[RMDB]
RNA sequence: GGGAACGACUCGAGUAGAGUCGAAAAAGAUAUGGAGCGUGAACUACUCGGAGGAAGGGAGCGUUGAAACAAGCUCGGAAACGAGCUUGUGGAGCUCAUUGACGUUACGAGCACGCUCCUAAGUCAAGAAAUGAUUGCUGUUCGCAGCAAUCAUUUCAAAAGAAACAACAACAACAAC
Reactivity to 2A3 in 0.01 (KOAc 150mM, MgCl2 10mM, bicine 150mM(pH8.5), 24C), signal-to-noise 1, nucleotides 027 to 126: a000g000a020u040a000u070g000g030a000g000c000g010u020g010a140a110c100u140a040c020u300c010g220g160a160g070g020a100a070g100g060g000a000g040c040g260u300u050g010a010a000a020c010a000a000g000c010u000c000g020g000a010a010a010c000g000a000g000c000u000u000g000u010g040g010a010g000c010u000c030a070u040u030g020a020c080g050u200u270a070c000g020a030g000c000a000c010g000c000u000c000c000u030a010a000g000u000c040a060a000
Reactivity to DMS in 0.01 (KOAc 150mM, MgCl2 10mM, bicine 150mM(pH8.5), 24C), signal-to-noise 2, nucleotides 027 to 126: a070g010a000u010a300u000g010g000a010g020c020g020u000g000a110a070c150u010a300c010u010c010g080g000a280g010g010a240a130g000g000g000a000g010c000g010u010u020g000a230a140a040c010a010a010g010c000u000c000g000g010a070a040a120c020g010a010g030c010u000u000g010u000g010g010a090g000c020u000c000a050u000u000g020a300c090g000u000u020a190c050g010a070g050c010a020c010g010c000u010c000c000u020a000a030g000u010c060a170a090